The record gives the reactivity of an RNA of 177 nucleotides to 2A3 and DMS. For DMS the reverse transcriptase was MarathonRT. The data come from the RNA Mapping Database (RMDB), library OK2TRN. 2A3 is a SHAPE reagent: it acylates the 2'-hydroxyl of flexible nucleotides of all four kinds.
RNA sequence: GGGAACGACUCGAGUAGAGUCGAAAAGCGUGGCGCGGUUAGAGGAUGGAAUUCCCCAAUUCCAUUUCUGGAAUAAAUAUGCCACCGCACGUAGCGAAACUCAUACCUUGAAAGAUGAGGGAGGGGGCUCAUUGUCCUCAUUCGUGAGGACAAUGAGAAAAGAAACAACAACAACAAC
Reactivity to 2A3 in 0.01 (KOAc 150mM, MgCl2 10mM, bicine 150mM(pH8.5), 24C), signal-to-noise 1, nucleotides 027 to 126: g060c020g030u060g000g030c040g020c030g020g030u030u090a110g030a010g200g020a000u010g040g000a000a010u050u080c060c000c000c000a000a010u010u000c000c010a020u020u030u090c020u010g020g060a150a080u160a160a150a000u300a150u220g000c020c020a000c000c010g000c000a020c020g040u060a070g050c040g050a020a060a030c020u000c010a030u190a280c040c000u150u080g140a180a100a050g040a060u100g010a040g000g020g040a060g000g030g000g000g000
Reactivity to DMS in 0.01 (KOAc 150mM, MgCl2 10mM, bicine 150mM(pH8.5), 24C), signal-to-noise 2, nucleotides 027 to 126: g020c040g010u010g020g010c040g000c080g010g000u010u000a070g010a030g000g000a010u000g000g000a040a010u010u000c050c010c030c080a170a160u000u000c000c000a020u000u010u010c020u000g020g030a150a040u020a100a080a110u030a100u010g010c010c030a090c120c020g000c030a060c060g000u010a110g000c030g000a070a160a140c040u010c040a010u000a100c050c030u000u010g000a100a110a160g000a040u010g000a040g000g010g000a160g020g030g010g010g000